The data come from the RNA Mapping Database (RMDB), library M2RFOK. Structure probing data (DMS and 2A3) for a 207-nucleotide construct. The RNA was probed in 150 mM KOAc, 10 mM MgCl2 and 150 mM bicine (pH 8.5) at 24 C. For 2A3 the reverse transcriptase was SuperScript II with manganese.
[RMDB]
RNA sequence: GGGAACGACUCGAGUAGAGUCGAAAACAUUUUUCCUCCCUACACAGUGACUCCAGCUUGGGAGGGGCAGGGCUAGGCUGAGCCAGCACUCCCUGUGGUGUCUGCCUGCCACGUGCAGCUCUGGAGUAAAACCUGGAGAAGUUCGCUUCUCCAGGAAUCUACCUCUGUAGUUCGCUACAGAGGUAGAAAAAGAAACAACAACAACAAC
Reactivity to DMS in 0.01 (KOAc 150mM, MgCl2 10mM, bicine 150mM(pH8.5), 24C), signal-to-noise 1, nucleotides 027 to 156: c070a120u000u020u010u050u020c020c000u000c000c020c010u020a100c220a190c210a190g020u010g010a060c010u000c000c000a110g000c090u010u000g030g010g020a120g030g020g010g000c060a040g010g000g020c010u000a060g010g000c030u010g020a290g050c090c040a070g040c020a090c080u000c010c020c040u000g040u070g030g040u010g000u020c010u000g010c000c010u000g000c020c010a050c110g000u010g020c040a170g010c070u010c020u040g040g000a060g020u000a020a110a080a100c000c000u000g020g010a010g030a040a010g000u010u010c300g020c020u010u000c000u000c010c000a000g010g010a010a000
Reactivity to 2A3 in 0.01 (KOAc 150mM, MgCl2 10mM, bicine 150mM(pH8.5), 24C), signal-to-noise 2, nucleotides 027 to 156: c020a030u060u000u050u140u090c000c020u020c030c000c000u130a040c170a020c020a150g110u040g080a040c000u000c000c010a000g010c030u020u060g000g000g000a000g000g000g000g000c000a000g000g010g000c060u300a010g010g020c010u020g030a040g190c060c020a020g060c000a010c020u110c010c010c000u030g010u030g010g020u030g120u000c040u020g000c000c000u020g040c000c020a120c190g120u090g020c010a020g010c020u010c030u060g000g010a000g010u000a000a090a000a010c000c010u000g010g000a000g010a000a000g000u050u180c200g000c110u000u000c000u000c010c000a000g000g010a000a010